[RMDB]
RNA sequence: GGGAACGACUCGAGUAGAGUCGAAAAGAUAUGGAUAGUUGAGUCGGAUCACCGUUGAAAAUCGACCGAGAUCGGAAACGAUCUCGGUCGAUUGGAGGUGCGCACGACAAUGAUGCUAUCCUAAGUCCGGAUUAAUUUACUUCGGUAAAUUAAUCCGAAAAGAAACAACAACAACAAC
Reactivity to DMS in 0.01 (KOAc 150mM, MgCl2 10mM, bicine 150mM(pH8.5), 24C), signal-to-noise 1, nucleotides 027 to 126: g020a130u020a300u000g000g010a000u010a020g000u050u000g000a300g000u000c000g010g010a300u000c000a030c010c010g040u000u000g030a230a070a010a000u000c000g010a000c040c000g000a100g000a020u000c000g030g010a110a110a190c000g010a010u000c010u030c000g000g010u000c020g000a000u010u010g000g000a090g040g040u000g020c220g000c300a300c040g000a000c010a020a220u020g010a110u000g000c000u010a020u000c010c000u000a040a190g000u020c050